[RMDB]
RNA sequence: GGGAACGACUCGAGUAGAGUCGAAAACUAUGUUUGUGCUCCCCUGUGCUCAGCUGUGACAGGGUAGUCUGGCAGGACGUACAGCAGUUUCCCUCUCAGUUUAGGAGGGCUGUCCUAAGAAUAGGGCCACAAUAAUGACGUUCGCGUCAUUAUUGUGAAAAGAAACAACAACAACAAC
Reactivity to DMS in 0.01 (KOAc 150mM, MgCl2 10mM, bicine 150mM(pH8.5), 24C), signal-to-noise 8, nucleotides 027 to 126: c030u010a070u010g000u010u000u000g010u010g010c040u010c050c020c010c030u000g020u010g010c040u010c080a120g010c090u010g000u010g010a050c040a060g010g010g010u010a050g010u010c030u000g010g020c060a080g000g010a060c110g000u010a040c060a070g000c090a070g010u010u010u010c010c000c000u000c010u010c100a110g010u020u020u020a110g000g000a040g010g010g010c260u010g010u000c000c000u000a050a130g010a110a090u010a040g010g000g010c050
Reactivity to 2A3 in 0.01 (KOAc 150mM, MgCl2 10mM, bicine 150mM(pH8.5), 24C), signal-to-noise 9, nucleotides 027 to 126: c020u030a070u130g080u010u090u060g070u080g020c010u040c000c010c000c000u020g050u090g070c020u030c090a190g040c080u150g040u070g140a020c020a020g020g030g010u020a020g040u010c030u020g040g000c020a040g030g050a040c050g040u130a080c030a030g030c010a030g030u020u090u030c000c050c000u010c000u000c010a240g030u130u140u200a060g010g020a000g010g010g000c020u030g020u010c000c000u050a100a070g110a140a110u090a070g000g000g000c000